Structure probing data (2A3 and DMS) for a 177-nucleotide construct. The RNA was probed in 150 mM KOAc, 10 mM MgCl2 and 150 mM bicine (pH 8.5) at 24 C. The data come from the RNA Mapping Database (RMDB), libraries RFM100 and RFMREP. Reactivities are given for positions 27 through 126.
RNA sequence: GGGAACGACUCGAGUAGAGUCGAAAACUUAUAUAGCCUUCAUUCAUGGUGGCAGUAAAAUGUUUAUUGUGUUUGAAUGUGUUUAUGUAAGAGGAGCCGUACCUGUUGGUAUGUCUCAUUAUAAUGACUACUGAUGUUUUUUCGAAAACAUCAGUAGAAAAGAAACAACAACAACAAC
Reactivity to 2A3 in 0.01 (KOAc 150mM, MgCl2 10mM, bicine 150mM(pH8.5), 24C), signal-to-noise 9, nucleotides 027 to 126: c000u010u000a000u000a000u010a010g000c000c000u000u000c000a010u000u000c000a000u010g020g000u000g020g000c000a000g030u040a000a050a040a060u020g060u030u180u240a030u020u010g000u000g000u010u000u010g040a020a020u050g150u020g020u160u300u030a000u010g000u000a010a010g060a110g130g030a000g000c020c000g000u000a000c000c010u170g190u300u300g070g000u000a000u010g010u000c000u000c010a010u060u120a060u030a090a120u110g060a020
Reactivity to DMS in 0.01 (KOAc 150mM, MgCl2 10mM, bicine 150mM(pH8.5), 24C), signal-to-noise 5, nucleotides 027 to 126: c010u000u000a010u000a020u000a020g000c000c010u000u000c000a000u010u000c000a010u000g000g030u000g000g000c000a000g010u010a080a100a160a140u000g010u000u000u030a010u000u000g020u000g000u000u000u000g000a010a020u010g000u030g020u010u020u000a000u000g000u000a010a010g000a200g010g000a020g010c020c000g020u010a020c000c000u010g020u020u010g020g020u000a010u000g000u000c010u000c010a060u020u020a080u020a100a080u020g010a300